This 177-nucleotide RNA was probed chemically with 2A3 and DMS. DMS adducts were read by reverse transcription with MarathonRT.
RNA sequence: GGGAACGACUCGAGUAGAGUCGAAAACACGGUGUGGAAGUUUACGAAGGUAUGGUGAUCGGUAUUCACAGCCGUGAUAACGACCUGACAGUAAACCCACUGAAAGGUAAGCAACUGACCAACGUUAUCCGGUAAAUAGCUUCGGCUAUUUACCGGAAAAAGAAACAACAACAACAAC
Reactivity to 2A3 in 0.01 (KOAc 150mM, MgCl2 10mM, bicine 150mM(pH8.5), 24C), signal-to-noise 1, nucleotides 027 to 126: c020a000c010g000g090u040g010u020g050g060a150a170g040u070u010u000a050c060g030a110a030g050g010u020a050u220g060g030u090g020a010u070c020g000g060u080a140u140u240c080a060c020a120g050c020c030g030u000g000a000u080a070a010c040g000a020c020c000u030g010a030c010a020g030u030a000a020a030c000c000c030a020c030u020g010a070a040a000g070g030u050a010a010g020c090a050a070c000u100g080a020c010c010a050a000c060g000u060u050a060
Reactivity to DMS in 0.01 (KOAc 150mM, MgCl2 10mM, bicine 150mM(pH8.5), 24C), signal-to-noise 2, nucleotides 027 to 126: c060a070c120g030g040u000g020u010g000g000a100a090g030u000u000u000a030c000g040a220a060g040g000u000a050u000g000g030u000g010a100u000c010g030g010u010a040u000u000c210a090c210a150g030c040c000g000u000g020a140u000a100a030c100g000a000c000c000u000g000a240c120a080g000u000a000a000a040c030c010c030a070c020u000g000a030a120a060g010g020u000a070a090g000c140a040a050c080u000g020a040c070c030a110a090c110g000u000u000a090